Conditions: 150 mM KOAc, 10 mM MgCl2 and 150 mM bicine (pH 8.5), 24 C.
Chemical mapping of a 207-nucleotide RNA with 2A3 and DMS.

RNA sequence: GGGAACGACUCGAGUAGAGUCGAAAAGUAUAAAAUCUGCGAGUAGUGCUAUUGUUGGAAUCACCGUACCUAUUUAGGUUUACGCUCCAAGAUCGGUGGAUAGCAGCCCUAUCAAUAUCUAGGAGAAAAAACCCAGGACUGUUCGCAGUCCUGGGAACAUUGGUUCAAUGUUCGCAUUGAACCAAUGAAAAGAAACAACAACAACAAC
Reactivity to 2A3 in 0.01 (KOAc 150mM, MgCl2 10mM, bicine 150mM(pH8.5), 24C), signal-to-noise 3, nucleotides 027 to 156: g020u010a060u080a250a080a010a060u070c030u070g070c060g000a060g010u080a020g030u070g040c030u030a030u110u100g110u060u070g060g050a090a050u090c010a020c010c000g020u040a020c000c000u100a170u260u200u300a020g000g000u030u040u020a020c020g010c000u040c020c000a010a000g010a030u020c010g020g020u010g010g050a010u040a010g020c050a010g020c030c010c000u040a050u100c040a070a050u030a010u240c010u010a030g000g000a010g000a100a030a000a040a030a040c000c000c010a000g000g000a000c000u010g020u050u090c190g000c090a000g000u000c000c000u000g000g000g000a000a000
Reactivity to DMS in 0.01 (KOAc 150mM, MgCl2 10mM, bicine 150mM(pH8.5), 24C), signal-to-noise 1, nucleotides 027 to 156: g000u050a130u020a040a020a090a100u000c040u000g000c030g000a110g030u000a040g020u010g000c010u000a030u020u000g000u000u040g030g010a090a120u000c030a090c020c020g040u010a040c000c000u000a160u000u000u000a050g010g020u020u000u010a030c000g000c030u010c030c020a060a060g020a060u000c060g020g000u000g010g020a060u000a030g010c000a150g000c140c100c000u000a120u000c030a050a090u010a070u000c030u000a110g000g000a070g000a000a040a070a090a090a110c000c010c020a000g010g040a020c020u010g010u000u010c220g040c000a060g020u000c010c010u000g000g010g020a010a030